RNA sequence: GGGAACGACUCGAGUAGAGUCGAAAAACGGAGAGCAGUGGCUGGCUCGGCGUCUCGGCACGGGGAAGUGCACCGCUGGCUGCCGAGUUUGACGAGAUCUGCAUCAAUGACGGUCGGCUUCUGCUUACCAGUGGGAUAAGUUCGCUUAUCCCACUGGAAAAGAAACAACAACAACAAC
Reactivity to 2A3 in 0.01 (KOAc 150mM, MgCl2 10mM, bicine 150mM(pH8.5), 24C), signal-to-noise 2, nucleotides 027 to 126: a010c090g100g020a090g010a000g050c020a010g000u040g010g020c000u000g000g060c030u030c050g000g010c020g010u040c010u000c020g010g020c020a020c050g050g000g000g070a050a110g180u080g090c060a110c050c040g040c150u050g050g020c070u070g000c020c010g010a000g000u050u110u070g000a010c040g010a020g000a190u050c030u190g020c050a030u090c050a050a280u140g050a030c020g010g010u020c010g000g000c000u000u020c000u010g020c000u000u000a110
Reactivity to DMS in 0.01 (KOAc 150mM, MgCl2 10mM, bicine 150mM(pH8.5), 24C), signal-to-noise 1, nucleotides 027 to 126: a090c150g020g000a240g000a040g000c020a000g020u000g010g000c050u020g010g010c010u020c020g010g020c040g010u000c000u000c010g010g000c000a020c030g000g020g010g000a100a120g000u000g000c110a100c140c050g030c100u040g050g000c090u000g040c000c000g000a090g000u000u010u000g000a060c040g000a080g000a090u030c070u000g000c070a110u000c100a070a060u020g010a100c150g030g030u000c030g000g000c020u000u000c010u000g000c000u000u000a110